[RMDB]
RNA sequence: GGGAACGACUCGAGUAGAGUCGAAAAAGUAGUAGCCUGACCACUUGAAGGUAUAGGUGGUAGUGAACCAUUGGGUUUUAAAGUAGUUUCCAGAAGCCCCUAUCCAUCAUAUAUUCAGGGUAGGACAAAUUACUAACUCGUUCGCGAGUUAGUAAUUAAAAGAAACAACAACAACAAC
Reactivity to DMS in 0.01 (KOAc 150mM, MgCl2 10mM, bicine 150mM(pH8.5), 24C), signal-to-noise 4, nucleotides 027 to 126: a110g010u000a080g010u000a160g020c030c030u010g000a080c100c060a080c090u000u000g010a110a060g010g020u010a060u010a030g010g030u000g000g010u000a060g000u010g000a080a080c040c060a160u010u000g000g020g010u000u000u010u000a080a100a140g000u000a090g000u000u000u000c030c020a160g020a120a150g020c150c050c020c010u010a020u000c010c000a110u010c120a090u000a130u010a110u000u010c130a080g010g010g010u000a020g010g000a080c080a030
Reactivity to 2A3 in 0.01 (KOAc 150mM, MgCl2 10mM, bicine 150mM(pH8.5), 24C), signal-to-noise 2, nucleotides 027 to 126: a000g110u160a020g020u040a020g070c020c030u060g000a040c010c000a040c060u060u090g130a250a050g110g000u140a080u130a110g020g020u030g010g020u000a060g040u030g050a010a020c020c020a060u070u100g080g030g030u040u010u020u030a080a090a010g040u050a030g010u000u050u020c030c030a040g040a150a020g090c040c000c000c040u020a010u000c030c000a040u070c060a030u130a040u050a020u200u190c050a020g000g000g000u020a010g010g010a000c030a000